[RMDB]
RNA sequence: GGGAACGACUCGAGUAGAGUCGAAAAUCUAAAACAACAUUCAUAGCAUGGUAUCUUGUAAUAUUUGACUUUCACUAUUAAUUCUUUCAGUUAUUAUUUGAGUGCCUGUCACAUGCCAGGUAUUGUUCUAAGCUUCAGGGAUGCAUCCAUGUACAAACCGUGCAUAGCUGUUCGCAGCUAUGCACGGAAAAGAAACAACAACAACAAC
Reactivity to 2A3 in 0.01 (KOAc 150mM, MgCl2 10mM, bicine 150mM(pH8.5), 24C), signal-to-noise 2, nucleotides 027 to 156: u070c010u060a000a080a000a040c040a050a020c000a090u020u110c030a070u120a040g000c020a020u050g000g010u020a020u080c040u080u080g080u060a100a220u000a160u190u180u110g020a020c000u080u050u050c060a000c030u100a080u200u090a090a040u120u170c070u030u180u100c020a070g020u070u110a030u110u160a040u020u070u130g100a110g010u010g010c000c020u020g070u110c000a010c000a130u130g000c000c000a000g000g000u020a030u100u130g000u050u030c050u110a110a010g040c040u080u100c080a000g070g000g000a060u060g020c000a020u040c020c000a030u070g020u010a010c070a080a000a000
This 207-nucleotide RNA was probed chemically with 2A3. For 2A3, 457 sequencing reads were counted. The data come from the RNA Mapping Database (RMDB), library OK3TST. Reactivities are given for positions 27 through 156. For 2A3 the reverse transcriptase was SuperScript II with manganese.